[RMDB]
Structure probing data (2A3 and DMS) for a 177-nucleotide construct. For DMS, 970 sequencing reads were counted. For 2A3, 937 sequencing reads were counted. The data come from the RNA Mapping Database (RMDB), library OK2TST.

RNA sequence: GGGAACGACUCGAGUAGAGUCGAAAAGGCGGCCAUGCCAUAACGCGUCUCAUGGGUGGCAGAUCCAAUAUGCGGUACUGCGACGACGUUGGCCAUUGAGAGCAACGGCGAAUCUACGGAUAGUGGCUCUGACCUCUGAGUUCGCUCAGAGGUCAGAAAAAGAAACAACAACAACAAC
Reactivity to 2A3 in 0.01 (KOAc 150mM, MgCl2 10mM, bicine 150mM(pH8.5), 24C), signal-to-noise 1, nucleotides 027 to 126: g080g000c020g020g000c010c020a050u170g010c000c000a000u070a010a050c050g020c020g140u000c020u000c000a060u080g000g060g070u050g050g000c020a000g030a020u010c000c000a080a020u140a090u220g110c050g020g020u110a140c030u070g020c050g030a010c020g000a020c050g050u060u080g050g000c050c000a090u150u280g060a100g000a020g080c020a050a000c030g020g000c000g030a040a080u080c030u120a030c100g050g000a020u050a030g040u060g050g000c010
Reactivity to DMS in 0.01 (KOAc 150mM, MgCl2 10mM, bicine 150mM(pH8.5), 24C), signal-to-noise 1, nucleotides 027 to 126: g000g010c030g030g020c010c060a040u020g010c000c020a080u000a100a120c110g010c050g000u000c040u000c080a040u000g000g040g020u020g000g030c050a010g000a140u000c030c040a080a120u000a050u000g040c050g020g010u020a150c090u000g000c050g000a050c030g000a080c080g040u000u000g010g000c020c000a080u010u010g000a100g020a150g030c040a060a040c110g000g000c020g020a120a030u000c050u020a040c100g040g000a040u000a180g000u000g010g010c120